[RMDB]
RNA sequence: GGGAACGACUCGAGUAGAGUCGAAAAGAGGAAUUCGCGAAGAUCGGAUUGAUCAAUUAUGUCCUCAGGGCAUCUGGAGCGUUCUUCAUUCGGAGAAAACUCCACGAGGACGACUCAGACCUCUACCACACCCGUAUCAAUUCGUUGAUACGGGUGUAAAAGAAACAACAACAACAAC
Reactivity to 2A3 in 0.01 (KOAc 150mM, MgCl2 10mM, bicine 150mM(pH8.5), 24C), signal-to-noise 4, nucleotides 027 to 126: g020a020g040g040a060a060u110u060c060g020c090g170a120a050g040a050u060c040g020g190a150u110u230g030a000u110c040a030a050u190u090a140u260g020u020c010c010u010c030a030g030g040g010c050a080u010c090u080g000g030a010g000c000g030u000u030c000u010u020c010a130u270u280c130g030g010a000g000a000a060a050a060c010u000c000c000a010c040g010a010g010g020a010c020g020a040c020u030c060a010g020a070c000c000u030c010u020a050c010c010
Reactivity to DMS in 0.01 (KOAc 150mM, MgCl2 10mM, bicine 150mM(pH8.5), 24C), signal-to-noise 4, nucleotides 027 to 126: g000a040g010g010a210a100u000u010c070g010c120g000a120a140g030a020u000c000g020g020a150u010u010g010a050u000c040a110a110u020u000a040u020g010u000c000c010u000c040a120g020g010g020c120a040u020c150u000g000g000a010g030c300g000u000u000c000u000u000c010a180u010u010c180g000g000a010g020a030a030a030a040c010u000c010c000a040c190g000a010g000g000a040c020g000a060c180u000c070a100g000a080c150c000u000c010u010a210c070c050

This 177-nucleotide RNA was probed chemically with 2A3 and DMS. 2A3 adducts were read by reverse transcription with SuperScript II with manganese. For DMS the reverse transcriptase was MarathonRT. Conditions: 150 mM KOAc, 10 mM MgCl2 and 150 mM bicine (pH 8.5), 24 C.